[RMDB]
RNA sequence: GGGAACGACUCGAGUAGAGUCGAAAAGAUAUGGAAGUUCUAUUACUGGCAACAGCUCGGAAACGAGACAUGCCAAAUACAUGAACUUCCUAAGUCAAAGCACGCCUGAGUUCGCUCAGGCGUGCAACGAGUGUACAAAGUUCGCUUUGUACACUCGAAAAGAAACAACAACAACAAC
Reactivity to 2A3 in 0.01 (KOAc 150mM, MgCl2 10mM, bicine 150mM(pH8.5), 24C), signal-to-noise 2, nucleotides 027 to 126: g010a000u010a040u110g000g010a000a030g000u010u000c000u030a130u090u130a180c170u100g030g000c010a070a100c070a280g120c010u000c020g040g010a050a080a060c020g000a010g020a060c030a070u080g000c010c000a040a150a010u150a020c050a080u050g000a000a000c000u010u000c010c000u000a110a000g000u030c030a140a150a000g000c000a000c000g020c030c010u030g030a030g040u160u260c300g100c200u010c000a000g000g060c000g020u010g010c030a000a020
Reactivity to DMS in 0.01 (KOAc 150mM, MgCl2 10mM, bicine 150mM(pH8.5), 24C), signal-to-noise 2, nucleotides 027 to 126: g010a030u010a290u000g000g000a040a020g000u010u000c020u020a160u030u000a100c180u000g000g000c010a020a080c230a190g000c020u000c000g000g010a110a090a150c000g000a010g000a040c050a120u010g000c010c000a000a040a080u010a070c100a060u010g010a000a020c000u000u010c000c000u000a020a070g000u020c020a060a120a140g010c020a030c020g060c000c000u000g000a030g030u000u010c200g010c000u000c000a030g000g020c000g030u000g000c000a000a020

Chemical mapping of a 177-nucleotide RNA with 2A3 and DMS. Reactivities are given for positions 27 through 126. Reactivities are rounded to 0.1 and cut off at 0 and 3. The data come from the RNA Mapping Database (RMDB), library TTRDEL. For DMS the reverse transcriptase was MarathonRT.